[RMDB]
RNA sequence: GGGAACGACUCGAGUAGAGUCGAAAAGGUGCGAUGUUCGCAUCGCACCAAAGAAGCUCAAAAUGACGCAAACAACGGCGUCAGCGUGAGCAAACGCGGAAAAAACCACUUGGUUCGCCAAGUGGAACCCAUGCAACUUGUUCGCAAGUUGCAUGGGAAAAGAAACAACAACAACAAC
Reactivity to DMS in 0.01 (KOAc 150mM, MgCl2 10mM, bicine 150mM(pH8.5), 24C), signal-to-noise 1, nucleotides 027 to 126: g030g000u000g000c000g000a000u000g060u000u000c170g020c010a050u000c000g020c000a000c010c000a000a060a110g000a140a120g030c000u000c010a070a000a010a030u000g000a000c000g040c000a000a000a080c290a050a250c170g000g010c000g000u000c000a010g020c300g030u000g020a030g010c000a010a010a130c210g020c170g000g010a000a060a160a050a170a060c000c000a010c000u000u020g000g000u000u010c170g060c040c000a000a020g010u000g000g000a000a000
Reactivity to 2A3 in 0.01 (KOAc 150mM, MgCl2 10mM, bicine 150mM(pH8.5), 24C), signal-to-noise 1, nucleotides 027 to 126: g000g000u010g000c030g000a030u010g020u020u040c110g000c080a010u000c000g050c010a000c000c000a020a000a020g000a040a000g000c000u000c000a060a050a010a060u050g040a000c000g030c020a060a210a300c040a070a210c130g060g000c010g000u000c020a010g020c010g090u020g010a020g000c000a000a110a010c130g050c170g080g070a020a170a010a000a000a030c020c000a000c010u000u020g070g010u030u060c260g030c000c000a000a000g000u000g010g010a000a000

An RNA of 177 nucleotides, treated with DMS and 2A3 and read out base by base. The DMS profile rests on 681 reads. Conditions: 150 mM KOAc, 10 mM MgCl2 and 150 mM bicine (pH 8.5), 24 C. Values cover nucleotides 27 to 126.